This 177-nucleotide RNA was probed chemically with DMS and 2A3. For DMS, 1,319 sequencing reads were counted. The data come from the RNA Mapping Database (RMDB), library OK2TST. The reactions ran in a buffer of 150 mM KOAc, 10 mM MgCl2 and 150 mM bicine (pH 8.5), at 24 C. For 2A3 the reverse transcriptase was SuperScript II with manganese. DMS (dimethyl sulfate) methylates the pairing face of unpaired adenines and cytosines. For 2A3, 1,223 sequencing reads were counted.
[RMDB]
RNA sequence: GGGAACGACUCGAGUAGAGUCGAAAAGUGAGUGGAUCGGAAAAUCAGUUCAACAUCUAUAAUCUACGGAGUGGGAAAUUGGUCCACGCAAAUAUUCUAAAAGAUGCUGAUCAGAUUUGGUCGGUUACGACCAUCGUCUUUUCGAAGACGAUGGUCGAAAAGAAACAACAACAACAAC
Reactivity to DMS in 0.01 (KOAc 150mM, MgCl2 10mM, bicine 150mM(pH8.5), 24C), signal-to-noise 2, nucleotides 027 to 126: g010u010g010a070g000u000g000g000a050u000c000g000g010a050a040a090a070u000c040a070g020u000u000c010a070a100c100a040u000c060u000a090u010a060a050u000c070u000a080c160g010g010a150g000u000g010g020g010a040a040a160u010u000g010g000u000c010c010a000c040g000c060a100a110a100u000a040u000u000c050u030a070a110a150a090g020a120u000g010c020u010g010a020u000c010a040g000a140u000u000u000g000g000u000c030g040g000u000u000a080
Reactivity to 2A3 in 0.01 (KOAc 150mM, MgCl2 10mM, bicine 150mM(pH8.5), 24C), signal-to-noise 2, nucleotides 027 to 126: g120u070g060a060g020u070g000g020a000u020c000g070g000a000a040a010a060u050c000a010g080u050u040c020a060a080c020a060u000c010u060a090u060a220a090u040c010u030a030c140g050g000a100g060u000g000g010g030a110a100a090u070u080g050g030u060c010c000a000c000g000c010a030a050a010u120a040u130u060c020u070a100a070a020a030g020a050u130g040c020u000g000a010u010c020a060g120a300u200u170u110g020g050u030c010g000g000u050u020a020